[RMDB]
This 177-nucleotide RNA was probed chemically with 2A3 and DMS. For 2A3, 8,882 sequencing reads were counted.
RNA sequence: GGGAACGACUCGAGUAGAGUCGAAAAGCGUCUCAUCGGUGGGGUGGCUCUCGAGCUUGAGGUGCCCAUAGCGAUCGUAGCGUUGCUCUACCUUUGCCAUGAGGCUAGGCGGAAUCGGGUAGCGCGAAAAUAGUAGCAUCUUCGGAUGCUACUAUUUAAAAGAAACAACAACAACAAC
Reactivity to 2A3 in 0.01 (KOAc 150mM, MgCl2 10mM, bicine 150mM(pH8.5), 24C), signal-to-noise 5, nucleotides 027 to 126: g020c020g060u000c010u010c020a070u070c070g210g030u070g010g010g000g020u050g040g010c000u020c000u010c060g100a080g080c050u080u070g030a050g040g080u060g030c020c000c000a060u090a010g090c030g050a060u070c070g070u070a010g000c000g040u030u040g020c010u000c010u020a040c010c010u040u070u070g000c020c010a150u220g080a090g150g000c040u040a020g030g000c050g060g070a140a090u100c050g010g000g000u010a000g000c000g000c010g030a070
Reactivity to DMS in 0.01 (KOAc 150mM, MgCl2 10mM, bicine 150mM(pH8.5), 24C), signal-to-noise 7, nucleotides 027 to 126: g020c100g010u000c020u000c040a070u000c080g010g010u000g010g010g010g020u000g010g000c030u010c040u000c070g010a120g020c110u010u000g010a060g010g010u000g010c020c010c020a070u010a060g010c050g010a040u000c110g000u010a100g010c050g010u000u000g000c040u000c010u010a090c040c010u000u010u000g020c020c030a130u010g010a150g020g010c020u010a040g000g000c090g010g020a080a080u010c190g000g000g010u000a040g010c030g010c030g000a060
The reactions ran in a buffer of 150 mM KOAc, 10 mM MgCl2 and 150 mM bicine (pH 8.5), at 24 C.